[RMDB]
RNA sequence: GGGAACGACUCGAGUAGAGUCGAAAAGAAAGAAGAAAAACCGUGUGAACUAUGAUGGCAUUACAAACCUCGACGAAAAGAAACACUUGAUACUACCGAAAGCAAGAGCUGCUGCAUACGGAAGAAAAUAUGCGCACUGAUUCGUCAGUGCGCAUAUAAAAGAAACAACAACAACAAC
Reactivity to DMS in 0.01 (KOAc 150mM, MgCl2 10mM, bicine 150mM(pH8.5), 24C), signal-to-noise 1, nucleotides 027 to 126: g000a070a070a180g000a070a070g000a110a000a090a130a120c060c010g000u050g000u000g000a090a120c060u000a040u010g000a040u000g010g030c090a010u050u000a170c240a010a040a120c000c020u000c040g030a120c050g000a130a060a010a110g000a000a030a000c110a140c040u050u000g000a050u000a100c040u010a010c080c020g000a020a050a020g010c010a010a010g010a110g030c090u000g000c000u010g000c040a000u000a020c110g000g000a070a060g000a120a050a030
Reactivity to 2A3 in 0.01 (KOAc 150mM, MgCl2 10mM, bicine 150mM(pH8.5), 24C), signal-to-noise 1, nucleotides 027 to 126: g080a000a090a000g010a090a060g160a000a010a000a000a000c010c000g080u070g060u110g080a030a180c000u010a030u190g010a010u050g080g000c030a000u050u040a010c030a060a240a150c000c000u000c020g030a010c000g030a260a000a000a000g090a000a170a000c090a000c010u010u120g020a030u060a040c010u110a080c020c110g050a160a020a000g000c000a000a070g000a030g020c030u000g000c000u000g000c000a010u070a010c020g000g150a070a000g000a170a020a000

About this RNA:
This 177-nucleotide RNA was probed chemically with DMS and 2A3. It was measured as part of the RMDB library OK1LIB. The DMS profile rests on 1,307 reads. The reactions ran in a buffer of 150 mM KOAc, 10 mM MgCl2 and 150 mM bicine (pH 8.5), at 24 C.